[RMDB]
RNA sequence: GGGAACGACUCGAGUAGAGUCGAAAAGAUAUGGACCGUCAAGCUAGAUCGUUGGAUCGGAAACGAUCCGAUGAUCUUGGACCUUGGACGGUCCUAAGUCAAAGCACUUCAGUUCGCUGAAGUGCAAGUUUUAUUUCCUCUUCGGAGGAAAUAAAACAAAAGAAACAACAACAACAAC
Reactivity to 2A3 in 0.01 (KOAc 150mM, MgCl2 10mM, bicine 150mM(pH8.5), 24C), signal-to-noise 3, nucleotides 027 to 126: g070a010u100a030u180g000g000a010c000c020g010u000c020a020a010g050c020u020a010g010a020u010c000g030u020u020g000g020a000u010c010g020g020a080a090a010c010g000a000u000c010c000g010a000u010g000a000u000c000u000u040g000g060a050c020c020u020u050g300g120a050c000g030g000u010c000c000u010a000a000g000u010c040a030a010a140g010c000a000c010u000u010c010a030g140u060u150c270g050c150u000g000a000a000g010u010g010c000a000a000
Reactivity to DMS in 0.01 (KOAc 150mM, MgCl2 10mM, bicine 150mM(pH8.5), 24C), signal-to-noise 4, nucleotides 027 to 126: g010a060u000a300u010g000g010a000c010c000g030u000c000a020a020g010c040u000a020g000a010u000c000g030u000u010g000g000a020u000c010g020g010a120a090a230c000g010a000u010c000c000g020a000u010g010a000u010c000u000u010g040g000a100c300c020u000u000g030g020a030c020g000g000u000c000c000u000a010a080g000u010c020a100a140a190g000c000a010c000u010u000c000a010g010u010u020c300g030c010u010g000a010a000g010u000g010c000a010a010